[RMDB]
RNA sequence: GGGAACGACUCGAGUAGAGUCGAAAAAGCUGCGCCAAAUCGGCGGAAAGGACCCCGCUAUCGGGAGCGGCUAGCAGCGAGGGUUGCCGCUCCAGCCGCGCUAUGAAGCAGUCAUAGCAGAUUUACAACCAUUAAUACUAUUCGUAGUAUUAAUGGUAAAAGAAACAACAACAACAAC
Reactivity to 2A3 in 0.01 (KOAc 150mM, MgCl2 10mM, bicine 150mM(pH8.5), 24C), signal-to-noise 9, nucleotides 027 to 126: a000g020c020u040g010c020g000c030c000a080a100a210u220c090g010g000c060g010g030a090a110a020g100g030a080c020c000c000c010g000c060u130a120u220c090g080g000g000a000g000c010g000g010c030u050a040g020c030a010g040c020g060a130g010g150g010u080u060g010c000c000g000c000u000c010c000a010g000c010c030g060c010g000c010u000a010u030g020a060a030g130c130a050g110u030c000a000u010a000g000c030a020g030a080u150u190u100a080c070a070
Reactivity to DMS in 0.01 (KOAc 150mM, MgCl2 10mM, bicine 150mM(pH8.5), 24C), signal-to-noise 9, nucleotides 027 to 126: a100g010c010u000g010c010g020c080c060a060a130a080u010c170g010g010c010g000g000a040a090a120g010g010a150c080c040c010c050g020c060u000a080u010c140g010g000g010a030g020c010g010g000c010u000a070g010c060a040g010c050g010a100g010g010g010u000u000g010c020c010g010c010u000c010c010a060g010c110c090g010c150g020c010u000a010u000g000a060a190g010c120a110g010u000c010a010u000a010g010c010a160g000a100u010u000u010a100c210a130